[RMDB]
RNA sequence: GGGAACGACUCGAGUAGAGUCGAAAAUCUACCGUUCGCGGUAGAAAAAAGCGUACUACUUAGCUUUUGACGCUGUUAGACGGGAGUCCCAAAUAGGACAUCGAUCGUCGAAGCAGCGAUAAGCUAAGUAUCGCAAAAACAUCGGUUCGCCGAUGAACCUGAGAAUCUAGUUCGCUAGAUUCUCAGGAAAAGAAACAACAACAACAAC
Reactivity to DMS in 0.01 (KOAc 150mM, MgCl2 10mM, bicine 150mM(pH8.5), 24C), signal-to-noise 2, nucleotides 027 to 156: u020c000u000a010c010c000g000u000u020c290g010c050g030g000u000a020g000a010a010a090a090a060a160g020c020g020u000a070c120u000a040c000u000u000a000g020c030u010u010u000u000g020a280c090g020c000u010g010u000u010a300g000a030c000g000g000g000a140g020u000c030c000c030a050a150a230u000a060g000g000a050c000a180u000c160g010a100u000c000g000u010c010g000a160a300g000c000a030g050c000g000a070u000a010a050g020c000u000a000a040g000u000a000u000c010g010c000a010a060a130a070a050c010a020u000c000g020g000u000u000c300g090c000c010g030a020u000g010a080a120
Reactivity to 2A3 in 0.01 (KOAc 150mM, MgCl2 10mM, bicine 150mM(pH8.5), 24C), signal-to-noise 5, nucleotides 027 to 156: u030c000u000a000c010c000g030u030u080c300g000c040g100g020u060a040g000a040a050a000a000a000a000g050c050g040u120a090c050u010a000c000u030u000a010g010c010u070u050u040u120g230a100c030g020c000u060g280u300u010a000g000a000c000g000g010g010a020g010u010c010c020c010a110a260a160u300a070g010g000a000c050a170u120c110g180a090u060c020g020u010c010g020a050a010g000c020a000g000c000g030a020u010a030a000g010c000u000a000a000g000u000a000u020c000g000c000a120a030a040a000a000c000a000u000c000g000g060u080u080c270g050c110c000g000a000u030g020a010a060